[RMDB]
RNA sequence: GGGAACGACUCGAGUAGAGUCGAAAAGAAAGAAAGAACCCUUCCCGCGGGGCUGGAUCUUCUAGAUGGUGCGGGCCGGGACAAGCCGGAGAGUGUCCCGGUUUCAGAAACAACCUUCGGCAGCCAAACUAGACUACCCACUUCGGUGGGUAGUCAACCUAGGAAUUCUGUUCGCAGAAUUCCUAGGAAAAGAAACAACAACAACAAC
Reactivity to 2A3 in 0.01 (KOAc 150mM, MgCl2 10mM, bicine 150mM(pH8.5), 24C), signal-to-noise 1, nucleotides 027 to 156: g020a000a020a000g020a000a130a020g030a200a240c030c000c000u000u010c000c000c000g010c010g020g000g050g000c020u040g020g030a100u180c040u230u020c060u300a010g000a000u020g000g170u010g000c000g000g000g000c010c000g000g000g000a000c000a000a020g010c000c000g010g000a020g000a000g020u010g000u010c000c010c000g000g010u000u030u000c000a030g040a000a010a000c040a020a000c020c000u000u000c000g020g000c010a060g040c060c070a070a080a110c070u140a080g010a000c000u000a020c010c000c010a000c040u030u030c110g100g010u000g010g000g000u000a000g000u000c000a000a000